Background: The record gives the reactivity of an RNA of 177 nucleotides to 2A3 and DMS.
RNA sequence: GGGAACGACUCGAGUAGAGUCGAAAAGAAUUACCAAAAGGUGCGACAGUUUAUGUGUCUAAUAAUCCAGCUGAACAAGGACGCUUCUUAAAAUUCUUCGUUGAUGCAGGUUUAAUUAAGAUCAAAAGUCUAGACGUACAUUCGUGUACGUCUAGACAAAAGAAACAACAACAACAAC
Reactivity to 2A3 in 0.01 (KOAc 150mM, MgCl2 10mM, bicine 150mM(pH8.5), 24C), signal-to-noise 2, nucleotides 027 to 126: g040a010a140u180u040a050c010c010a010a040a030a030g120g000u090g010c000g000a000c030a020g000u060u220u220a150u090g110u090g030u030c040u130a160a000u100a050a000u000c000c000a060g050c000u120g040a090a000c020a050a020g030g000a000c050g010c090u070u030c030u090u100a030a030a060a100u000u000c000u110u090c020g010u030u010g000a100u080g020c070a000g040g030u040u000u040a010a140u060u050a300a040g060a140u130c030a050a000a000a000
Reactivity to DMS in 0.01 (KOAc 150mM, MgCl2 10mM, bicine 150mM(pH8.5), 24C), signal-to-noise 1, nucleotides 027 to 126: g000a230a030u000u010a010c030c040a110a030a030a220g010g020u010g010c030g040a110c120a100g030u040u000u030a100u010g000u010g000u020c040u030a080a090u020a040a030u000c020c030a030g000c060u010g080a070a070c100a080a150g000g010a010c080g000c080u070u000c090u000u010a060a020a160a190u010u000c010u000u070c000g000u000u000g010a040u000g000c020a150g000g000u000u050u000a000a080u040u040a050a040g000a180u010c000a100a030a030a110
For DMS the reverse transcriptase was MarathonRT. The 2A3 profile rests on 524 reads. Conditions: 150 mM KOAc, 10 mM MgCl2 and 150 mM bicine (pH 8.5), 24 C.